[RMDB]
RNA sequence: GGGAACGACUCGAGUAGAGUCGAAAAGAGCGAGGCGGAGAUCGAGCGCCAGUUCGUGCGCGGCGACCUGAAGUUGCUUCGGCUUCUUCUUGUUCGCGUCCUGCGUGGUUCGGCUCCUUCUUCACACGACUAUUUUGAUGUUCGCAUCAAAAUAGUCAAAAGAAACAACAACAACAAC
Reactivity to 2A3 in 0.01 (KOAc 150mM, MgCl2 10mM, bicine 150mM(pH8.5), 24C), signal-to-noise 2, nucleotides 027 to 126: g110a010g060c110g020a060g060g020c040g020g010a030g030a150u080c000g020a020g030c020g040c050c010a020g030u070u110c080g070u080g040c040g000c000g000g030c020g000a010c000c020u000g000a000a000g020u010u020g000c000u010u040c200g080g000c000u000u000c010u020u020c000u020u020g080u140u060c000g020c010g010u080c030c020u020g020c080g030u100g000g070u000u020c010g030g000c010u000c020c000u080u000c000u030u040c020a040c030a010c100
Reactivity to DMS in 0.01 (KOAc 150mM, MgCl2 10mM, bicine 150mM(pH8.5), 24C), signal-to-noise 3, nucleotides 027 to 126: g000a090g020c060g010a070g010g010c300g010g010a030g000a030u000c090g020a040g030c020g020c150c040a100g010u000u000c070g020u000g020c030g030c030g020g000c000g000a010c010c010u000g010a030a020g030u000u000g010c020u000u010c190g040g000c010u010u010c000u000u000c010u000u000g000u010u000c000g030c020g000u000c020c120u000g000c060g030u010g000g000u000u000c030g010g000c010u000c050c010u000u000c030u010u000c030a060c100a130c200